[RMDB]
RNA sequence: GGGAACGACUCGAGUAGAGUCGAAAAACUAGUAUGUACAGGGGUGAGUUGACCUGUCAUCUAGACUGCUGACCAUCAACUCACCGGUCAGCUGGAUGAUGUCCACAGACUACGACAUCAGUACUCAGUGUAAGGAUGCCUUCGGGUAUCUUUACACAAAAGAAACAACAACAACAAC
Reactivity to DMS in 0.01 (KOAc 150mM, MgCl2 10mM, bicine 150mM(pH8.5), 24C), signal-to-noise 9, nucleotides 027 to 126: a230c010u000a010g000u040a010u000g010u060a010c000a010g000g000g010g010u020g000a090g030u010u000g000a070c010c020u000g010u000c000a010u000c010u000a020g000a190c040u000g000c010u000g000a010c010c050a150u020c120a050a050c090u010c080a080c150c140g000g000u000c010a010g000c010u010g000g000a060u000g000a010u000g000u000c000c160a110c170a110g010a110c100u030a100c170g000a020c000a010u000c000a040g010u020a080c050u000c080a190
Reactivity to 2A3 in 0.01 (KOAc 150mM, MgCl2 10mM, bicine 150mM(pH8.5), 24C), signal-to-noise 9, nucleotides 027 to 126: a000c000u010a000g050u120a070u070g060u090a010c010a010g020g040g020g060u120g080a110g050u060u060g090a070c010c020u010g000u000c000a000u000c000u010a020g060a120c040u040g000c000u000g000a010c010c010a040u120c050a060a090c060u030c100a070c020c050g000g000u000c000a000g000c010u010g030g020a040u040g000a000u000g010u000c010c010a060c050a080g110a050c030u060a030c080g010a000c000a010u010c010a010g040u050a060c030u030c110a030